[RMDB]
RNA sequence: GGGAACGACUCGAGUAGAGUCGAAAAAUAGUGUUAAGGACCUCGUUGAUAAGUGUGUUAAAAUUCUUGUGAAAGCCUUCGAUGUCUUCACACAGACAAUUACCAUUGCAGGUGUAGAGGCUAAGUGCUAUAGCGCUAUGUUCGCAUAGCGCUAUAGAAAAGAAACAACAACAACAAC
Reactivity to 2A3 in 0.01 (KOAc 150mM, MgCl2 10mM, bicine 150mM(pH8.5), 24C), signal-to-noise 1, nucleotides 027 to 126: a000u070a020g030u000g050u110u070a050a040g040g040a040c000c040u020c030g070u020u090g040a100u050a190a090g060u060g020u000g040u090u090a020a000a000a180u120u010c010u040u020g060u010g120a100a030a020g000c000c010u050u020c010g060a110u060g010u040c000u000u030c020a030c000a010c000a020g040a010c000a010a080u080u050a020c030c020a030u020u170g050c090a020g060g000u010g080u090a010g000a010g020g000c000u010a030a020g000u030g000
Reactivity to DMS in 0.01 (KOAc 150mM, MgCl2 10mM, bicine 150mM(pH8.5), 24C), signal-to-noise 4, nucleotides 027 to 126: a060u010a070g010u010g000u010u000a100a080g010g000a120c020c010u010c030g000u000u000g010a060u010a090a060g020u000g020u000g000u010u010a040a070a070a110u010u000c030u010u000g010u000g010a080a070a100g000c060c020u000u000c140g020a140u010g030u000c020u010u000c070a030c030a030c140a160g010a040c090a020a060u000u010a120c060c040a070u000u000g030c220a080g010g000u000g030u000a160g000a040g000g010c020u000a060a070g010u010g010